[RMDB]
RNA sequence: GGGAACGACUCGAGUAGAGUCGAAAAUACCAAUGGUUCGCCAUUGGUACUUGUAUUGACGAAUACUACCGUAGAAGUAUUCAGGUCUCAUUACUACGGAUAUACACUAGAGUUUCGACUCUAGUAACAGUUGCCUGUAGUUCGCUACAGGCAACUGAAAAGAAACAACAACAACAAC
Reactivity to 2A3 in 0.01 (KOAc 150mM, MgCl2 10mM, bicine 150mM(pH8.5), 24C), signal-to-noise 2, nucleotides 027 to 126: u030a010c000c000a000a000u030g050g000u050u030c290g010c020c000a000u000u000g000g010u000a020c030u030u100g120u170a160u120u260g120a050c060g020a000a000u010a010c010u060a270c000c000g000u000a020g000a150a000g010u000a030u010u010c060a020g000g110u000c010u000c050a090u050u190a070c000u010a000c000g000g010a030u060a040u000a190c060a000c020u000a000g000a000g030u080u140u100c220g120a020c010u020c000u010a000g000u000a040a010
Reactivity to DMS in 0.01 (KOAc 150mM, MgCl2 10mM, bicine 150mM(pH8.5), 24C), signal-to-noise 1, nucleotides 027 to 126: u000a010c010c000a000a000u000g000g000u010u020c270g010c010c000a000u000u000g000g000u000a000c010u000u010g010u030a140u010u000g010a180c090g000a010a000u000a010c000u000a110c000c030g000u000a050g010a150a030g040u000a010u000u000c000a050g010g020u000c010u000c000a100u000u000a120c010u000a020c010g000g000a260u020a080u000a100c230a030c000u000a000g000a040g000u000u000u000c160g010a030c000u000c000u070a000g000u000a040a100